The record gives the reactivity of an RNA of 207 nucleotides to 2A3.
The RNA was probed in 150 mM KOAc, 10 mM MgCl2 and 150 mM bicine (pH 8.5) at 24 C.
The data come from the RNA Mapping Database (RMDB), library M2RFPK.
The 2A3 profile rests on 975 reads.
RNA sequence: GGGAACGACUCGAGUAGAGUCGAAAACUGCCGCCGGGACGCAGUGAUCCUCGCAGGGUCGCACGGUCGCCUCGGGUCGGCCUUGUGUCGGCUCGACCUGCGAGGGGAGCGAGUGGCGAGCCCGACCAAAACUUUCUCGCCUUCGGGCGAGAAAGAAGUAAAUGAGUCGGUUCGCCGACUCAUUUACAAAAGAAACAACAACAACAAC
Reactivity to 2A3 in 0.01 (KOAc 150mM, MgCl2 10mM, bicine 150mM(pH8.5), 24C), signal-to-noise 1, nucleotides 027 to 156: c060u050g020c000c010g020c010c010g090g020g140a100c020g000c040a140g260u000g010a000u030c000c000u000c000g000c000a000g000g020g050u170c060g010c050a130c120g050g010u100c060g020c030c000u020c000g000g000g000u000c000g000g000c000c000u230u290g080u100g010u040c020g000g000c000u020c020g050a060c000c000u000g000c000g000a000g010g000g000g000a000g000c010g020a090g080u110g030g000c000g010a070g010c000c040c010g010a010c000c030a040a070a000a000c000u010u000u010c000u000c010g030c000c010u020u070c180g100g000g000c000g010a000g000a000a000a000g000a000a000